Structure probing data (DMS and 2A3) for a 207-nucleotide construct. The RNA was probed in 150 mM KOAc, 10 mM MgCl2 and 150 mM bicine (pH 8.5) at 24 C.
RNA sequence: GGGAACGACUCGAGUAGAGUCGAAAAUGGACUUUUUACAGUUCCUACUUAUCCGGUUUUAACGCUGUUUUAUUGGCGCAAAGGUUUACGGAUAAACAACUAAUAAUUAAACCGUUUGUGUGCGAAAAUUGGACGUUUAGGUUCGCCUAAACGUCAACACUACUUAAGACUUCGGUCUUAAGUAGUGAAAAGAAACAACAACAACAAC
Reactivity to DMS in 0.01 (KOAc 150mM, MgCl2 10mM, bicine 150mM(pH8.5), 24C), signal-to-noise 2, nucleotides 027 to 156: u000g000g000a080c030u000u000u000u000u010a110c090a100g020u000u000c010c040u010a090c120u000u000a030u010c000c010g000g020u000u000u000u000a180a110c020g000c010u000g010u000u000u020u000a130u040u010g000g010c010g010c020a030a100a090g020g020u000u000u000a190c020g000g000a040u000a000a040a160c060a080a180c120u000a120a150u000a070a170u010u000a060a030a030c010c020g020u000u000u000g040u000g000u000g000c010g000a100a090a040a200u000u020g040g000a020c010g010u010u000u000a000g000g020u000u020c300g010c010c000u000a000a010a000c000g020u010c000a010a050
Reactivity to 2A3 in 0.01 (KOAc 150mM, MgCl2 10mM, bicine 150mM(pH8.5), 24C), signal-to-noise 5, nucleotides 027 to 156: u090g030g010a020c040u050u100u100u120u220a100c180a040g010u090u100c020c000u040a060c020u040u030a000u010c000c000g050g010u000u000u010u080a030a020c050g000c020u030g170u100u080u100u210a160u170u240g020g000c010g020c050a100a070a060g000g010u000u010u010a000c000g000g010a010u030a030a080a010c050a040a020c040u140a050a150u110a110a030u180u120a050a010a000c000c000g030u030u160u060g050u000g000u010g030c100g080a060a040a060a120u110u110g080g000a010c010g000u010u000u000a000g010g010u000u040c160g100c030c000u000a000a000a000c000g000u000c000a000a000
The DMS profile rests on 4,310 reads.